Source information: Structure probing data (2A3 and DMS) for a 207-nucleotide construct. For 2A3, 4,156 sequencing reads were counted. Conditions: 150 mM KOAc, 10 mM MgCl2 and 150 mM bicine (pH 8.5), 24 C. It was measured as part of the RMDB library RNAMAK.
RNA sequence: GGGAACGACUCGAGUAGAGUCGAAAAACAUGUGGGCUAUUCGUAGCCCACAUGUAAAAACCGUAGGACGUGGGGAGCUGAUGGUUCGAAAGAGCCAUACCAGCUUUGAUCCCGUCCUAAACGGAAAAACAAUAUAGCUAUUCGUAGCUAUAUUGAACAAUUAAUCACCUUUCGAGGUGAUUAAUUGAAAAGAAACAACAACAACAAC
Reactivity to 2A3 in 0.01 (KOAc 150mM, MgCl2 10mM, bicine 150mM(pH8.5), 24C), signal-to-noise 3, nucleotides 027 to 156: a000c010a000u010g000u000g010g000g000c000u010a030u060u110c250g130u060a000g010c010c000c000a000c000a000u000g000u000a000a000a000a000a000c000c000g010u000a010g000g020a000c040g110u300g000g010g000g000a010g000c010u000g010a010u000g010g020u010u000c010g040a060a090a070g010a010g000c010c000a010u070a200c100c010a010g010c000u270u010u020g010a010u010c010c000c000g000u010c000c000u010a020a060a010c010g000g030a090a050a010a000a030c000a000a000u000a000u010a000g000c000u010a020u060u090c230g120u060a020g000c000u000a000u000a000u000u000g010a020a000
Reactivity to DMS in 0.01 (KOAc 150mM, MgCl2 10mM, bicine 150mM(pH8.5), 24C), signal-to-noise 2, nucleotides 027 to 156: a060c000a000u000g030u000g020g020g010c000u000a030u000u000c300g040u000a020g000c000c000c000a000c000a010u040g000u000a030a040a050a060a100c000c000g010u000a020g000g010a030c000g020u010g020g000g000g000a050g010c010u010g020a080u000g020g020u000u010c020g000a170a150a300g000a040g000c010c000a040u000a000c160c010a020g000c000u000u020u000g010a100u010c000c010c010g000u000c000c010u000a000a030a070c030g000g010a070a060a110a130a170c000a020a030u000a010u000a000g010c000u000a030u000u000c280g000u000a020g010c000u000a000u000a000u010u010g000a070a200